[RMDB]
Structure probing data (2A3) for a 207-nucleotide construct. It was measured as part of the RMDB library RNAMAK. Values cover nucleotides 27 to 156. 2A3 adducts were read by reverse transcription with SuperScript II with manganese.

RNA sequence: GGGAACGACUCGAGUAGAGUCGAAAAGGGGUCGAACAACAGCCAUGGAACUACGAGCGAGGAUCUAUACUGAAGCCUCCACGGUAUAGGGAGCUCGCCAUGGACAUGUUCGACGGAGGCACCCAAACGUCCGAGAUGUUUCGACAUCUCGGACGAAGUCUUAGAACGACUUCGGUCGUUCUAAGACAAAAGAAACAACAACAACAAC
Reactivity to 2A3 in 0.01 (KOAc 150mM, MgCl2 10mM, bicine 150mM(pH8.5), 24C), signal-to-noise 1, nucleotides 027 to 156: g030g030g060g000u010c010g000a010a010c070a060a010c040a190g000c000c000a020u000g000g000a200a200c200u100a060c230g000a010g000c000g000a230g010g000a000u000c000u010a000u010a010c000u030g100a150a050g000c000c010u000c000c000a010c000g040g010u010a000u000a010g000g000g000a000g000c000u010c000g010c000c000a000u000g010g110a090c000a080u180g010u000u000c010g000a000c020g000g000a000g020g000c000a060c000c030c000a010a120a050c030g020u000c000c000g010a010g010a020u030g010u120u190u300c240g060a020c000a010u000c000u010c000g000g000a000c000g010a000a000